[RMDB]
RNA sequence: GGGAACGACUCGAGUAGAGUCGAAAAAGUACGCCAGCCGAUGCGUUUCGCAGAGAUGUGACCAUCGCAACAAGUAGCAGUGGUGGUAGUACCAAUACGGUUUAUUUGGUUGAGAUGGUGCCGCCACGAUAUCAGGGUAUUUCGAUACCCUGAUAUCAAAAGAAACAACAACAACAAC
Reactivity to DMS in 0.01 (KOAc 150mM, MgCl2 10mM, bicine 150mM(pH8.5), 24C), signal-to-noise 8, nucleotides 027 to 126: a100g010u020a020c100g010c030c030a130g020c120c040g020a040u010g000c150g010u000u040u020c030g020c020a030g000a140g000a130u010g010u010g010a040c040c000a020u000c010g000c070a120a060c110a070a060g000u020a040g010c090a080g010u010g010g010u010g010g010u000a090g000u010a300c000c000a020a070u010a090c140g010g010u020u020u030a050u020u020u010g000g010u000u010g000a100g020a090u010g000g010u000g000c010c010g010c020c020a010c060
Reactivity to 2A3 in 0.01 (KOAc 150mM, MgCl2 10mM, bicine 150mM(pH8.5), 24C), signal-to-noise 9, nucleotides 027 to 126: a000g110u080a020c050g040c020c010a030g060c060c010g020a030u050g040c070g080u030u070u110c030g000c010a010g020a010g010a120u030g020u020g020a010c000c000a000u010c010g000c030a020a070c020a060a040g110u130a020g040c100a020g030u050g040g010u010g000g030u060a050g100u050a060c000c010a020a020u100a090c060g090g000u080u170u110a120u070u100u090g150g000u030u040g050a070g010a130u070g040g030u020g010c000c010g000c010c010a010c040

Background: The record gives the reactivity of an RNA of 177 nucleotides to DMS and 2A3. The DMS profile rests on 25,448 reads. The RNA was probed in 150 mM KOAc, 10 mM MgCl2 and 150 mM bicine (pH 8.5) at 24 C. For DMS the reverse transcriptase was MarathonRT. For 2A3 the reverse transcriptase was SuperScript II with manganese. High DMS reactivity at an A or C suggests that its Watson-Crick edge is free. The 2A3 profile rests on 18,840 reads. Values cover nucleotides 27 to 126. The data come from the RNA Mapping Database (RMDB), library OK1LIB.